[RMDB]
RNA sequence: GGGAACGACUCGAGUAGAGUCGAAAAGAUAUGGAGAGUGGACAUGCUCCAGGGUUCGGAAACGAACCCGGAGCAACAGCCACCUCCUAAGUCAAACGCUCCCUAUACCUUCGGGUAUAGGGAGCAACAACUUCCUUCAGUUCGCUGAAGGAAGUUGAAAAGAAACAACAACAACAAC
Reactivity to DMS in 0.01 (KOAc 150mM, MgCl2 10mM, bicine 150mM(pH8.5), 24C), signal-to-noise 2, nucleotides 027 to 126: g000a040u000a300u000g000g000a020g000a190g020u000g000g000a050c090a260u000g010c000u020c000c000a140g050g010g010u000u000c000g000g000a070a080a190c010g000a000a010c030c000c000g000g010a000g000c020a020a010c180a160g000c010c000a020c020c000u000c000c000u000a010a100g000u000c020a100a120a150c220g020c000u000c010c000c000u000a000u000a010c000c010u000u000c250g000g000g010u000a000u000a000g000g000g000a000g000c000a000a050
Reactivity to 2A3 in 0.01 (KOAc 150mM, MgCl2 10mM, bicine 150mM(pH8.5), 24C), signal-to-noise 1, nucleotides 027 to 126: g000a000u090a060u130g000g010a080g050a070g000u020g000g040a060c090a170u070g030c010u000c030c100a170g000g000g000u020u000c000g010g020a120a140a100c030g000a000a000c020c000c000g000g000a000g000c000a000a000c020a030g000c000c000a000c000c000u000c000c000u010a120a010g050u050c020a180a070a070c190g000c000u010c010c000c010u010a000u000a000c010c020u040u060c300g160g020g000u020a000u010a000g010g000g030a000g000c010a000a000
Conditions: 150 mM KOAc, 10 mM MgCl2 and 150 mM bicine (pH 8.5), 24 C.
An RNA of 177 nucleotides, treated with DMS and 2A3 and read out base by base.
DMS adducts were read by reverse transcription with MarathonRT.